[RMDB]
Conditions: 150 mM KOAc, 10 mM MgCl2 and 150 mM bicine (pH 8.5), 24 C. Chemical mapping of a 177-nucleotide RNA with 2A3 and DMS. For DMS, 66,485 sequencing reads were counted. DMS adducts were read by reverse transcription with MarathonRT. Reactivities are given for positions 27 through 126. High 2A3 reactivity points to a flexible backbone, as in loops and unpaired stretches.

RNA sequence: GGGAACGACUCGAGUAGAGUCGAAAAGGUGGCCUCGGCACGAUGGGUUUUGGUUUACCUGCGGCACUGGGCGUCAAAAUGGCGUUGCCAGAAGAAACCGUGGUUUGCGUCACUGGCGACGGCAGUACUCACAUACUAGAUUCGUCUAGUAUGUGAGAAAAGAAACAACAACAACAAC
Reactivity to 2A3 in 0.01 (KOAc 150mM, MgCl2 10mM, bicine 150mM(pH8.5), 24C), signal-to-noise 9, nucleotides 027 to 126: g100g030u080g090g010c010c010u020c030g020g000c050a040c190g100a190u090g010g010g040u040u060u120u130g180g010u100u130u100a030c000c010u030g010c020g010g000c030a020c150u060g000g020g030c020g020u040c020a040a050a030a230u080g080g020c000g010u010u030g010c010c000a020g040a150a020g040a050a130a010c080c020g030u090g040g300u090u170u300g060c030g030u050c030a010c060u010g020g000c010g000a000c000g010g040c000a010g030u040a060
Reactivity to DMS in 0.01 (KOAc 150mM, MgCl2 10mM, bicine 150mM(pH8.5), 24C), signal-to-noise 9, nucleotides 027 to 126: g010g020u000g010g010c020c010u000c240g010g010c040a070c060g020a100u000g010g010g010u000u000u000u010g020g010u010u010u000a050c030c010u000g020c040g010g000c050a100c050u000g010g000g010c040g010u000c060a060a070a100a120u000g000g000c000g010u000u000g000c000c000a010g000a090a090g000a070a050a040c060c060g020u010g030g010u000u000u000g010c070g000u010c160a120c020u000g000g000c020g000a020c010g010g000c020a040g000u000a150